[RMDB]
RNA sequence: GGGAACGACUCGAGUAGAGUCGAAAAUGACAAAUACCCCGUGUACAUGAACUUAUAAGACGAGUACAACGUAUGGUACAUCACAUGUAUCUUAUUAGUUUUUAAGUACCUCGUGUACAUAGACUUAUGAGACGAGUACAUCGUAUGGUACAUAAAACCAUAGUAUUAGCUUCGGCUAAUACUAUGGAAAAGAAACAACAACAACAAC
Reactivity to 2A3 in 0.01 (KOAc 150mM, MgCl2 10mM, bicine 150mM(pH8.5), 24C), signal-to-noise 3, nucleotides 027 to 156: u080g030a010c050a020a090a030u190a150c000c000c000c010g020u010g000u010a020c020a040u120g050a300a030c010u020u020a010u000a020a000g010a030c030g020a010g020u000a000c040a140a030c150g030u110a090u280g000g000u000a000c010a110u160c050a060c030a150u130g070u160a110u070c070u110u110a140u140u130a120g060u010u040u030u050u130a150a030g000u010a000c000c010u020c020g010u000g010u020a000c000a020u200a020g010a020c000u010u040a010u050g010a010g040a050c050g010a020g030u000a010c000a010u010c020g000u000a100u240g000g000u110a010c000a030u090a080a080a010a010